[RMDB]
Notes:
Chemical mapping of a 177-nucleotide RNA with 2A3 and DMS. For 2A3, 1,010 sequencing reads were counted. It was measured as part of the RMDB library OK2TRN. 2A3 adducts were read by reverse transcription with SuperScript II with manganese. DMS adducts were read by reverse transcription with MarathonRT.

RNA sequence: GGGAACGACUCGAGUAGAGUCGAAAACUGCCAUCACACCUGUACAGGCCGACACGCUAGAUCAGCCACCUGCCGCGGACGGUAUACCGCUUGAUGUUACGGACAUUUCAUUAAAUAUGGAAGAUAGCUGAAUGGUUCAGUUCGCUGAACCAUUCAGAAAAGAAACAACAACAACAAC
Reactivity to 2A3 in 0.01 (KOAc 150mM, MgCl2 10mM, bicine 150mM(pH8.5), 24C), signal-to-noise 1, nucleotides 027 to 126: c000u040g000c010c030a070u150c020a050c010a030c040c060u080g020u060a020c040a100g020g000c030c000g020a040c000a020c090g000c030u080a060g030a180u080c000a000g020c000c000a030c020c000u030g000c010c010g000c040g010g020a070c010g000g000u080a030u120a090c000c000g060c000u020u060g000a050u070g010u080u050a050c000g020g000a010c050a070u060u070u020c010a020u000u080a210a210a110u300a070u060g000g020a020a000g070a110u080a060g050
Reactivity to DMS in 0.01 (KOAc 150mM, MgCl2 10mM, bicine 150mM(pH8.5), 24C), signal-to-noise 2, nucleotides 027 to 126: c070u000g020c070c020a040u000c050a040c050a110c050c030u020g040u010a080c100a130g010g020c020c080g020a100c080a040c070g010c040u010a100g070a080u010c090a110g000c010c040a080c060c050u000g040c050c050g000c050g010g010a100c020g010g000u000a040u000a130c050c030g000c050u000u010g000a070u010g010u010u010a100c070g000g010a090c140a080u000u000u000c030a030u010u000a120a080a120u000a080u000g010g010a020a040g010a110u000a060g020